An RNA of 207 nucleotides, treated with DMS and 2A3 and read out base by base. In probing experiments dimethyl sulfate is read out at A N1 and C N3, which are open when not base-paired. The data come from the RNA Mapping Database (RMDB), library OK3TST. For 2A3, 2,704 sequencing reads were counted. The RNA was probed in 150 mM KOAc, 10 mM MgCl2 and 150 mM bicine (pH 8.5) at 24 C.
[RMDB]
RNA sequence: GGGAACGACUCGAGUAGAGUCGAAAAGAAAUGAGAGCACUUGCCUGCGCUGUUGUCAUUGCUCACUAUGAGCCCGUGGCUGUCUUUUACUCCAGCUUCUCUGAGUGUCUCAUUGUCUGGGGUCUAAGGCUGUCAGCCCAUGGUCUUUCUACCCUGGCACCCCUAUAUAGUUCGCUAUAUAGGGGUGAAAAGAAACAACAACAACAAC
Reactivity to DMS in 0.01 (KOAc 150mM, MgCl2 10mM, bicine 150mM(pH8.5), 24C), signal-to-noise 2, nucleotides 027 to 156: g000a060a070a070u010g010a070g000a070g040c020a040c040u000u000g000c090c020u010g030c070g040c000u000g010u000u000g010u000c020a180u000u000g040c000u020c030a120c070u000a040u000g020a050g010c010c060c050g020u000g010g020c000u000g010u000c000u000u000u000u000a100c010u010c000c000a010g000c100u010u010c030u010c040u020g020a090g040u010g010u000c020u000c030a090u010u010g000u000c010u000g010g000g000g010u000c040u000a040a050g010g010c000u000g020u000c060a110g000c040c020c040a050u000g020g010u000c020u000u000u000c020u000a150c040c010c010u000g020g000
Reactivity to 2A3 in 0.01 (KOAc 150mM, MgCl2 10mM, bicine 150mM(pH8.5), 24C), signal-to-noise 4, nucleotides 027 to 156: g020a000a040a010u110g000a030g000a000g000c040a000c090u110u110g060c050c060u190g030c120g020c100u030g030u070u030g060u060c010a030u020u070g000c010u020c040a070c140u170a150u200g020a010g020c040c050c070g050u010g000g000c020u010g010u050c000u020u030u010u010a010c000u000c010c000a020g010c070u260u100c030u050c020u020g030a020g060u180g190u110c060u020c050a010u030u020g040u050c010u010g000g000g000g020u000c020u010a000a000g000g020c040u040g100u080c030a020g000c010c000c010a020u030g000g000u000c000u020u050u000c050u070a110c000c000c020u030g060g020